[RMDB]
RNA sequence: GGGAACGACUCGAGUAGAGUCGAAAAGAAGGGAAGGUGAAUACUUCCUGUCAUAUUUUGACUACCUAGAUACAAGGCACUCUUUUCUGUCACUGAAAACUGUCCUUGGGAAGUACUCGUACUCAUCUCCUCUAACACCCUUCGGGGUGUUAGAGGAAAAAGAAACAACAACAACAAC
Reactivity to 2A3 in 0.01 (KOAc 150mM, MgCl2 10mM, bicine 150mM(pH8.5), 24C), signal-to-noise 1, nucleotides 027 to 126: g070a010a030g100g000g020a030a030g010g030u090g080a090a090u140a120c000u000u040c020c000u000g010u000c000a010u010a270u280u250u050u050g010a010c000u040a060c060c020u020a060g030a060u160a100c000a010a010g000g040c080a000c050u100c000u030u030u050u080c020u110g300u230c080a010c250u050g000a020a000a020a020c040u010g020u170c010c000u030u000g000g010g060a010a000g030u020a070c010u030c120g000u030a040c020u000c040a100u070c060
Reactivity to DMS in 0.01 (KOAc 150mM, MgCl2 10mM, bicine 150mM(pH8.5), 24C), signal-to-noise 2, nucleotides 027 to 126: g000a170a140g010g010g000a040a060g010g010u010g060a230a110u000a050c010u000u000c010c000u010g010u000c070a070u000a130u000u010u000u000g000a010c010u000a050c080c080u020a120g000a220u000a130c030a000a020g000g000c150a020c000u000c090u000u000u000u000c000u000g000u010c200a090c230u000g000a020a000a010a060c120u000g030u020c010c020u010u000g000g000g010a060a020g000u000a040c160u000c030g040u000a110c090u000c020a090u000c150
Notes:
The data come from the RNA Mapping Database (RMDB), library OK2TST. The record gives the reactivity of an RNA of 177 nucleotides to 2A3 and DMS. The 2A3 profile rests on 744 reads.